The data come from the RNA Mapping Database (RMDB), library M2RFPK. Structure probing data (DMS and 2A3) for a 207-nucleotide construct. Reactivities are given for positions 27 through 156.

[RMDB]
RNA sequence: GGGAACGACUCGAGUAGAGUCGAAAAGAAAGUUCAAGCAAGCUAGCCGGCAAAACAGCAAACUUGACCACCAAGGAUAAAAGAGAUCUUAUCCAAGGAUGCAAAAGAUAAUCUCACUUUUGACACCAAAACAGGGAGUAGUUCGCUACUCCCUGAAUCAGAGAAUACAGUUCGCUGUAUUCUCUGAAAAAGAAACAACAACAACAAC
Reactivity to DMS in 0.01 (KOAc 150mM, MgCl2 10mM, bicine 150mM(pH8.5), 24C), signal-to-noise 2, nucleotides 027 to 156: g010a070a050a070g010u000u000c040a060a120g030c010a050a250g000c010u000a300g040c000c010g030g010c030a170a080a090a200c070a090g000c030a060a130a010c000u000u000g000a160c050c040a060c050c050a090a300g040g000a070u000a000a020a070a040g000a300g000a150u010c050u000u000a010u010c000c000a070a210g030g000a090u000g010c000a040a030a060a040g000a050u000a030a130u010c050u000c060a180c020u000u010u010u000g000a140c030a060c070c010a030a080a080a160c000a050g000g000g000a020g020u000a000g010u000u000c300g000c010u000a010c000u000c010c000c000u000g000a000a050
Reactivity to 2A3 in 0.01 (KOAc 150mM, MgCl2 10mM, bicine 150mM(pH8.5), 24C), signal-to-noise 3, nucleotides 027 to 156: g050a010a070a000g010u040u030c020a010a020g000c020a090a000g000c030u080a020g040c020c060g080g000c070a070a050a060a070c040a020g030c020a050a060a080c010u020u010g020a020c010c020a030c020c010a060a050g000g010a020u020a030a040a010a000g150a010g000a020u030c010u010u020a010u000c020c010a010a050g030g020a030u040g010c000a020a020a000a010g020a040u100a090a080u080c050u020c040a050c000u020u030u040u020g100a130c040a030c110c070a030a080a070a070c000a000g010g020g000a010g000u010a000g010u050u060c150g000c060u000a000c020u050c000c000c000u010g000a000a000

For 2A3, 2,264 sequencing reads were counted. In probing experiments dimethyl sulfate is read out at A N1 and C N3, which are open when not base-paired. For DMS the reverse transcriptase was MarathonRT.